[RMDB]
RNA sequence: GGGAACGACUCGAGUAGAGUCGAAAACUACGUGUUGUACCACCUAUACUCUUGUCAUUGAUUGUUUACCCAAUGACUGGUUUAAACAUGAAAGACAAUGCUUUUUUUAAAUGUAUUGGAAUCCUUAAUCCAUAAUACGAUUCGUCGUAUUAUGGAUAAAAGAAACAACAACAACAAC
Reactivity to 2A3 in 0.01 (KOAc 150mM, MgCl2 10mM, bicine 150mM(pH8.5), 24C), signal-to-noise 7, nucleotides 027 to 126: c010u090a030c070g110u080g020u070u050g050u050a050c020c030a050c020c010u050a060u030a100c050u080c030u060u050g000u010c040a220u040u030g030a020u030u040g060u070u090u060a050c050c030c000a050a080u170g100a120c140u040g000g000u030u130u140a020a010a000c010a010u050g060a060a020a010g040a000c010a020a030u030g030c020u140u180u090u030u020u070u170a110a140a020u110g010u010a020u000u040g030g020a050a040u050c010c030u050u070a060
Reactivity to DMS in 0.01 (KOAc 150mM, MgCl2 10mM, bicine 150mM(pH8.5), 24C), signal-to-noise 9, nucleotides 027 to 126: c030u000a090c130g020u000g010u000u000g010u000a110c100c080a130c110c060u000a090u010a050c070u010c090u000u000g010u000c000a050u000u000g000a170u010u000g000u010u010u010a060c300c040c010a030a070u010g000a110c170u000g000g000u000u000u000a030a020a020c030a010u000g010a180a050a040g000a080c000a010a010u010g000c040u000u000u000u010u020u010u010a030a040a070u000g010u000a030u000u000g010g010a120a120u010c050c020u000u000a170